[RMDB]
RNA sequence: GGGAACGACUCGAGUAGAGUCGAAAAUAGCCCUUCGGGGCUAGCACAAGGGGUCACCCGUUUGACGAGCGAGACAUGCGAACUGAAGCCUCCACGGUUUCGCAACAGCUCGCUCCGAGGGUGACGGAGGCACCCAACGGUUAGGAUUCGUCCUAAAAGCUAGACCUAUAUUCGUAUAGGUCUAGCUAAAAGAAACAACAACAACAAC
Reactivity to 2A3 in 0.01 (KOAc 150mM, MgCl2 10mM, bicine 150mM(pH8.5), 24C), signal-to-noise 3, nucleotides 027 to 156: u050a010g000c020c010c030u020u010c180g050g000g000g000c000u010a020g070c050a060c050a140a100g120g030g060g000u010c000a000c000c010c030g030u130u140u110g010a010c000g000a000g010c010g010a010g090a230c090a190u070g010c010g000a010a010c010u020g040a200a000g020c000c000u000c020c000a000c000g020g050u100u300u250c010g000c000a040a110c070a080g080c010u000c000g000c000u000c000c010g000a000g000g010g000u030g000a000c000g000g000a000g000g000c000a030c010c020c030a070a050c070g140g080u040u010a000g000g000a040u070u060c110g060u070c080c010u040a080a060a020
Reactivity to DMS in 0.01 (KOAc 150mM, MgCl2 10mM, bicine 150mM(pH8.5), 24C), signal-to-noise 2, nucleotides 027 to 156: u000a050g040c000c000c000u000u000c300g080g040g000g010c000u010a010g040c100a110c070a200a060g000g030g030g020u000c030a060c010c020c010g010u000u000u010g020a120c160g000a010g000c010g010a050g010a110c080a300u000g010c000g030a030a080c010u000g000a050a120g030c010c030u000c020c020a300c000g030g010u000u000u000c010g040c010a080a080c130a080g000c010u000c010g000c010u010c000c000g010a080g010g040g010u000g000a000c070g020g020a050g060g020c030a180c050c000c020a120a080c060g020g000u000u000a020g000g000a170u000u000c190g040u000c010c050u000a040a080a180

This 207-nucleotide RNA was probed chemically with 2A3 and DMS. Reactivities are given for positions 27 through 156. 2A3 adducts were read by reverse transcription with SuperScript II with manganese. The RNA was probed in 150 mM KOAc, 10 mM MgCl2 and 150 mM bicine (pH 8.5) at 24 C. The data come from the RNA Mapping Database (RMDB), library RNAMAK.